[RMDB]
The data come from the RNA Mapping Database (RMDB), library RFMREP. The record gives the reactivity of an RNA of 177 nucleotides to DMS and 2A3. The DMS profile rests on 20,303 reads. 2A3 adducts were read by reverse transcription with SuperScript II with manganese. The reactions ran in a buffer of 150 mM KOAc, 10 mM MgCl2 and 150 mM bicine (pH 8.5), at 24 C.
RNA sequence: GGGAACGACUCGAGUAGAGUCGAAAAGUCAUUCCCAGAUACAAUGGACAAUAUGCUGUUAUAAUUGUGUGGCAUUGUCCUUGCUGUUUGGAGAUAAUAAAGGGUCUAACUCUUCGGAGUUAGACCCGAACUGAUAUACGUUCGCGUAUAUCAGUUCAAAAGAAACAACAACAACAAC
Reactivity to DMS in 0.01 (KOAc 150mM, MgCl2 10mM, bicine 150mM(pH8.5), 24C), signal-to-noise 9, nucleotides 027 to 126: g010u000c110a090u000u000c030c000c000a050g010a030u000a030c030a030a030u020g020g010a020c000a020a060u010a080u000g020c000u000g010u000u010a120u000a140a180u010u010g010u000g020u000g000g010c010a040u000u000g000u000c000c000u000u010g000c160u000g010u000u010u000g010g010a120g010a040u000a080a080u020a080a090a170g000g000g010u000c000u000a000a010c000u000c000u000u010c200g020g000a030g010u000u000a000g000a000c000c000c000
Reactivity to 2A3 in 0.01 (KOAc 150mM, MgCl2 10mM, bicine 150mM(pH8.5), 24C), signal-to-noise 9, nucleotides 027 to 126: g050u030c020a070u100u070c000c000c000a000g000a000u050a000c010a010a060u210g000g010a010c010a020a040u090a090u240g010c010u030g090u300u140a190u070a300a300u300u230g100u050g030u080g150g000c000a010u000u010g000u000c000c000u000u010g040c090u000g050u020u020u030g080g020a190g030a080u080a150a040u120a130a300a130g000g000g000u000c000u000a000a000c010u000c010u060u080c250g040g000a000g000u000u000a000g000a000c000c000c000